[RMDB]
An RNA of 177 nucleotides, treated with DMS and 2A3 and read out base by base. The RNA was probed in 150 mM KOAc, 10 mM MgCl2 and 150 mM bicine (pH 8.5) at 24 C. Source: RMDB libraries RFM100 and RFMREP, as collected in RNAgym. For 2A3, 1,322 sequencing reads were counted.
RNA sequence: GGGAACGACUCGAGUAGAGUCGAAAAGGCAGGCGAUUGUUGUGAGAAGGAAUACCUGAUGAUAUCGCGCGUGGUGCAUGGCCGUUCUUAACACGUGGAGUGAUCUGUCUGGUCAAAUCUGAUAACGUCUGUCCUAUCAUUUCGAUGAUAGGACAGAAAAAGAAACAACAACAACAAC
Reactivity to DMS in 0.01 (KOAc 150mM, MgCl2 10mM, bicine 150mM(pH8.5), 24C), signal-to-noise 6, nucleotides 027 to 126: g010g000c040a040g010g010c020g000a090u010u000g000u010u010g010u000g000a080g020a070a070g000g010a170a090u030a090c030c020u010g000a080u010g010a100u010a050u000c050g010c080g020c030g020u000g000g010u010g000c040a060u000g010g010c030c030g000u010u000c040u000u010a090a090c110a080c090g000u010g010g010a130g010u010g000a050u000c030u000g010u000c040u010g000g000u000c060a020a060a090u010c060u000g000a080u030a070a130c180g000
Reactivity to 2A3 in 0.01 (KOAc 150mM, MgCl2 10mM, bicine 150mM(pH8.5), 24C), signal-to-noise 3, nucleotides 027 to 126: g020g000c020a010g020g010c050g100a140u010u050g030u030u040g020u080g040a090g040a100a020g090g060a110a100u060a150c000c000u080g000a060u080g000a010u020a020u120c010g000c000g030c020g050u040g010g050u040g060c030a090u040g080g020c000c020g050u110u060c060u080u170a030a010c010a020c030g000u030g060g010a070g000u050g030a060u030c010u100g080u030c000u080g000g020u070c020a040a030a030u070c050u050g070a110u110a160a030c040g090